[RMDB]
RNA sequence: GGGAACGACUCGAGUAGAGUCGAAAAGCCGUCAUUGUUUCGGUCAAACACCAUGACGGGAACCGGAACGCCUGCUUUAGAAAUCGCAUUCCAAUGCGCCUUGGUUGGACUCCAGCCCUGUAACUUCACGGUAAGUUUACCGGAGCGGUCAGCACUGGAUUUACUAUGGCUUCGGCCAUAGUAAAUCAAAAGAAACAACAACAACAAC
Reactivity to 2A3 in 0.01 (KOAc 150mM, MgCl2 10mM, bicine 150mM(pH8.5), 24C), signal-to-noise 2, nucleotides 027 to 156: g060c010c000g030u050c040a100u130u060g050u030u040u020c040g050g000u040c090a110a120a060c050a070c040c030a070u150g050a040c110g010g000g010a000a050c000c000g020g020a030a020c030g030c010c000u040g050c030u180u130u100a100g070a080a180a010u190c000g030c010a040u200u150c040c080a150a060u040g000c040g060c020c010u060u030g070g020u040u050g030g040a020c040u000c040c020a030g020c000c000c000u000g020u080a070a070c010u050u070c110a050c190g100g030u080a070a090g040u090u100u070a010c020c040g000g010a000g000c030g000g010u040c050a020g030c050a030c090u130g000